[RMDB]
RNA sequence: GGGAACGACUCGAGUAGAGUCGAAAAAAAAUAUUUGAGGAGGUGGAUUUUUACAGCAGGGAGAAGCAGGCUGACAAGUGCCACUUGUUAAUGGUGACUACCACCUUCCGUACCUACUGUGUGCCAGCUAAGCUGGUUCUUUCGAGAACCAGCUUAGAAAAGAAACAACAACAACAAC
Reactivity to DMS in 0.01 (KOAc 150mM, MgCl2 10mM, bicine 150mM(pH8.5), 24C), signal-to-noise 2, nucleotides 027 to 126: a100a120a070a070u010a040u000u000u020g020a090g010g000a060g000g030u000g010g010a130u010u010u000u010u000a150c030a020g020c020a020g000g000g000a150g030a060a060g030c050a070g000g000c080u020g000a030c110a090a060g010u010g010c070c030a060c040u000u010g000u000u010a060a090u000g020g000u010g000a100c070u000a130c030c000a010c020c000u000u010c000c030g010u000a090c040c030u000a070c090u000g030u000g000u000g040c050c060a130g020